[RMDB]
RNA sequence: GGGAACGACUCGAGUAGAGUCGAAAAGUCAUCAAUGAGAUGCUCGACGCAGCCGUCAAGAUCACAGAGGCGCUGCGUGUAAAUCUGGUGACAGUGGCAGAUGCGCAGAAUUCUGUUUUCGGGGAUGGAUUCUUAUAAAGUUCGCUUUAUAAGAAUCAAAAGAAACAACAACAACAAC
Reactivity to DMS in 0.01 (KOAc 150mM, MgCl2 10mM, bicine 150mM(pH8.5), 24C), signal-to-noise 9, nucleotides 027 to 126: g010u000c010a010u000c020a090a110u000g010a090g010a100u010g010c110u010c140g010a040c030g010c010a020g010c090c060g030u000c020a080a150g010a090u010c170a090c160a100g010a170g010g000c080g010c000u000g000c020g000u000g000u000a040a090a090u000c030u000g000g020u000g010a040c030a090g010u010g000g000c040a040g000a050u000g010c090g010c100a080g000a090a100u000u000c030u000g000u000u000u010u000c050g010g000g000g000a160u010g010
Reactivity to 2A3 in 0.01 (KOAc 150mM, MgCl2 10mM, bicine 150mM(pH8.5), 24C), signal-to-noise 7, nucleotides 027 to 126: g010u010c000a010u000c010a040a210u210g040a090g010a120u060g030c070u060c070g030a010c000g000c000a000g120c190c030g000u020c030a050a070g050a220u210c050a050c050a150g120a080g100g000c010g000c020u000g000c010g000u000g000u010a040a050a020u020c030u030g020g000u020g020a020c020a040g040u060g070g000c030a020g020a100u080g020c070g010c070a030g120a080a080u140u050c020u050g060u070u030u090u110c050g020g010g000g020a010u060g100
Structure probing data (DMS and 2A3) for a 177-nucleotide construct. It was measured as part of the RMDB library OK2TST. The DMS profile rests on 16,075 reads. The RNA was probed in 150 mM KOAc, 10 mM MgCl2 and 150 mM bicine (pH 8.5) at 24 C. For 2A3, 10,881 sequencing reads were counted.